[RMDB]
An RNA of 177 nucleotides, treated with DMS and 2A3 and read out base by base. DMS (dimethyl sulfate) methylates the pairing face of unpaired adenines and cytosines. Source: RMDB library OK2TRN, as collected in RNAgym.

RNA sequence: GGGAACGACUCGAGUAGAGUCGAAAACACACACUCUGUCUCACUCUGUGAGUGACAGAGAGUGAGAGUCACUGACUCAGUGACACUGUCUCUGAGUCUGUGAGUGACUCUGAGUCACAGUGUGUCAGCUCUUCUGUGCUUUCGAGCACAGAAGAGCAAAAGAAACAACAACAACAAC
Reactivity to DMS in 0.01 (KOAc 150mM, MgCl2 10mM, bicine 150mM(pH8.5), 24C), signal-to-noise 2, nucleotides 027 to 126: c120a120c020a000c010a080c020u000c010u000g000u010c020u010c020a020c000u000c000u000g010u000g000a300g030u010g000a080c040a020g010a040g010a040g010u000g050a030g020a020g000u000c000a050c020u000g000a020c000u000c000a020g000u000g010a010c010a100c190u020g000u000c000u000c000u000g010a000g020u000c000u000g000u000g000a040g020u000g000a010c000u000c080u000g010a100g020u000c060a030c020a030g010u010g000u000g020u000c190a160
Reactivity to 2A3 in 0.01 (KOAc 150mM, MgCl2 10mM, bicine 150mM(pH8.5), 24C), signal-to-noise 3, nucleotides 027 to 126: c050a000c000a000c000a010c010u010c000u070g160u200c000u030c030a010c010u050c030u040g170u050g190a150g090u130g100a070c010a020g070a000g000a010g020u080g020a010g000a000g000u010c000a010c040u010g030a000c000u000c020a010g010u000g030a030c140a190c300u260g010u000c000u000c000u020g010a000g000u000c010u050g050u060g020a020g000u000g000a000c010u000c210u190g060a100g030u000c030a010c020a010g000u020g010u000g000u020c060a030

For DMS the reverse transcriptase was MarathonRT. For DMS, 2,382 sequencing reads were counted. 2A3 adducts were read by reverse transcription with SuperScript II with manganese.